[RMDB]
RNA sequence: GGGAACGACUCGAGUAGAGUCGAAAACACAGGAUUCCGGCUGCAAAUUCCCUUGCGAGGAGGGAGGACGGGAGCCUGCUAUUUAUUUUUCGACACGUUGCAGGCGUGCAGUCUAUUGGGUGGUGUAGUACUACUGCCAUUUCGAUGGCAGUAGUACAAAAGAAACAACAACAACAAC
Reactivity to 2A3 in 0.01 (KOAc 150mM, MgCl2 10mM, bicine 150mM(pH8.5), 24C), signal-to-noise 2, nucleotides 027 to 126: c060a010c020a020g090g030a050u060u050c030c030g040g000c000u090g000c050a020a080a140u080u060c000c000c000u010u080g090c120g150a110g030g060a030g000g030g000a030g000g030a000c030g000g040g040a000g060c000c010u020g000c010u030a090u080u150u030a120u040u140u030u040u120c060g020a010c010a010c130g040u040u040g050c050a040g030g000c030g020u020g000c010a010g050u010c000u070a110u070u120g050g040g020u050g000g030u060g050u020a050
Reactivity to DMS in 0.01 (KOAc 150mM, MgCl2 10mM, bicine 150mM(pH8.5), 24C), signal-to-noise 2, nucleotides 027 to 126: c180a130c030a080g000g020a120u000u000c020c040g010g010c030u020g000c070a080a080a190u010u000c000c000c000u010u000g030c150g000a100g020g010a050g000g000g000a070g010g020a110c140g000g000g000a140g030c020c010u000g010c040u000a050u000u010u000a150u020u000u000u020u000c110g030a090c090a090c130g010u010u010g000c080a020g000g000c020g000u000g000c050a080g000u000c030u000a080u000u010g000g010g010u010g000g010u010g020u010a120